The record gives the reactivity of an RNA of 177 nucleotides to DMS and 2A3. Values cover nucleotides 27 to 126. DMS adducts were read by reverse transcription with MarathonRT. For 2A3, 6,909 sequencing reads were counted. It was measured as part of the RMDB library OK2TRN. Conditions: 150 mM KOAc, 10 mM MgCl2 and 150 mM bicine (pH 8.5), 24 C.

RNA sequence: GGGAACGACUCGAGUAGAGUCGAAAACUUGAUCAAAACACACUAUGUCCCGUUGUUCAAGGGACUGACGAUGGCAGAUGACCUUACAUCCGUUGUGAAGAAGAUGUUGGACAACACAAAUGGACAAUCUAGUGUUUGUAUUCGUACAAACACUAGAAAAAGAAACAACAACAACAAC
Reactivity to DMS in 0.01 (KOAc 150mM, MgCl2 10mM, bicine 150mM(pH8.5), 24C), signal-to-noise 9, nucleotides 027 to 126: c060u000u000g020a050u010c100a070a070a100a090c100a070c130a080c150u010a100u010g010u000c000c010c160g020u000u000g010u000u000c090a060a090g000g000g010a070c030u000g010a060c140g010a080u000g000g010c070a030g010a090u000g000a130c110c060u000u010a090c050a050u000c010c040g020u000u010g010u000g010a100a100g000a110a080g000a070u010g010u000u000g010g010a050c040a020a060c050a060c160a030a080a090u010g010g010a040c110a060a170
Reactivity to 2A3 in 0.01 (KOAc 150mM, MgCl2 10mM, bicine 150mM(pH8.5), 24C), signal-to-noise 5, nucleotides 027 to 126: c010u050u160g060a030u160c080a050a080a110a000c090a000c020a010c070u080a070u140g030u000c010c030c050g020u030u080g020u020u070c040a050a060g070g010g000a040c000u000g030a010c020g050a050u030g060g000c020a050g030a150u090g080a150c020c050u050u110a040c010a020u010c030c030g100u120u080g090u080g120a080a100g030a030a010g020a030u080g100u100u050g040g020a000c010a060a010c040a000c010a030a120a110u130g020g000a010c010a040a040